[RMDB]
RNA sequence: GGGAACGACUCGAGUAGAGUCGAAAAGAUAUGGACAUGUGCGGAGUGCCCAUUUGUCAGCAGAAUGUCGGAAACGACCGCUUCUGCUUGGAUUUAAUGGGCCUCGGAUAGCAUGUCCUAAGUCAAAGCUGAACAAAGUUUCGACUUUGUUCAGCAACGUCUACAAAGGGUUCGCCCUUUGUAGACGAAAAGAAACAACAACAACAAC
Reactivity to 2A3 in 0.01 (KOAc 150mM, MgCl2 10mM, bicine 150mM(pH8.5), 24C), signal-to-noise 3, nucleotides 027 to 156: g020a020u080a020u160g000g000a000c000a000u010g060u060g040c120g130g020a030g020u300g020c000c000c000a020u020u010u010g030u020c010a000g000c000a000g020a110a020u250g060u080c010g000g040a100a150a050c050g030a020c010c000g000c020u010u000c010u000g020c000u010u090g000g000a010u150u280u190a020a020u000g000g000g000c010c000u000c000g000g000a070u110a040g010c000a000u000g000u000c010c000u010a100a010g010u010c050a190a070a000g000c000u000g000a000a000c000a000a000a000g010u020u080u260c270g090a030c000u030u010u000g000u000u000c000a000g020c000a000a010